Structure probing data (2A3 and DMS) for a 177-nucleotide construct. Reactivities are given for positions 27 through 126. The RNA was probed in 150 mM KOAc, 10 mM MgCl2 and 150 mM bicine (pH 8.5) at 24 C. For DMS, 5,323 sequencing reads were counted. For DMS the reverse transcriptase was MarathonRT. Source: RMDB library OK2TST, as collected in RNAgym. 2A3 adducts were read by reverse transcription with SuperScript II with manganese.
[RMDB]
RNA sequence: GGGAACGACUCGAGUAGAGUCGAAAAGGGCAGUUUGACUGGGGCGGUCGCCUCCUAAACGGUAACGGAGGCGUACAAAGGUUUCCUCUGAACGGGUAGAAAUCGUAUCUAGAGUGUAAAGGCAUAACGUUCAAUUUGAUUUCGAUCAAAUUGAACGAAAAGAAACAACAACAACAAC
Reactivity to 2A3 in 0.01 (KOAc 150mM, MgCl2 10mM, bicine 150mM(pH8.5), 24C), signal-to-noise 3, nucleotides 027 to 126: g030g000g020c050a050g020u040u090u100g080a050c060u040g000g040g020g000c040g030g010u040c020g020c000c000u020c000c010u120a170a130a060c110g150g030u070a040a000c050g010g000a000g000g010c000g000u030a010c020a030a090a010g040g000u010u040u020c010c000u030c020u000g030a040a010c050g060g000g050u050a050g090a030a100a020u080c020g010u040a070u080c090u110a030g010a010g040u120g030u110a100a080a000g050g000c040a040u040a140a030
Reactivity to DMS in 0.01 (KOAc 150mM, MgCl2 10mM, bicine 150mM(pH8.5), 24C), signal-to-noise 5, nucleotides 027 to 126: g020g000g020c030a080g000u000u000u010g010a080c100u000g020g010g010g030c110g000g000u000c020g000c000c000u000c000c000u010a110a100a190c140g010g010u000a120a160c300g000g000a010g010g010c020g000u000a040c060a060a090a110g000g010u010u000u000c030c020u010c040u000g000a040a090c120g000g020g000u000a080g010a060a060a060u000c040g000u010a100u000c040u010a060g000a070g010u010g010u000a050a080a070g010g000c050a070u010a060a160